[RMDB]
Structure probing data (2A3) for a 207-nucleotide construct. The data come from the RNA Mapping Database (RMDB), library M2RFPK. For 2A3, 500 sequencing reads were counted. As a SHAPE reagent, 2A3 marks flexible, mostly unpaired nucleotides at the ribose 2'-OH.
RNA sequence: GGGAACGACUCGAGUAGAGUCGAAAACAAGAUCGGUGGAUCGCAGCCCUAUCAAUAUCUAGGAGAACUGUGCUAUGUUUAGAAGAUUAGGUAGUCUCUAAACAGAACAAUUUACCUGCUGAACAAAAAAAUCCAAUGGCGUUCGCGCCAUUGGAAAUCAAUUGUCACGGUUCGCCGUGACAAUUGAAAAAGAAACAACAACAACAAC
Reactivity to 2A3 in 0.01 (KOAc 150mM, MgCl2 10mM, bicine 150mM(pH8.5), 24C), signal-to-noise 1, nucleotides 027 to 156: c070a060a050g020a090u050c030g080g030u110g050g030a000u030c010g000c000a030g000c000c000c030u100a110u120c060a090a210u080a070u250c040u060a040g000g070a120g020a070a060c030u040g010u020g020c040u060a090u100g000u030u000u000a030g010a280a000g000a070u080u090a040g050g020u050a040g030u000c010u000c010u000a010a020a000c040a000g070a030a000c000a040a080u070u090u140a020c020c000u050g060c070u150g090a110a030c000a020a070a010a060a000a000a000u010c000c000a000a000u000g000g000c000g040u080u000c240g000c000g030c000c000a000u000u000g000g010a000a000a000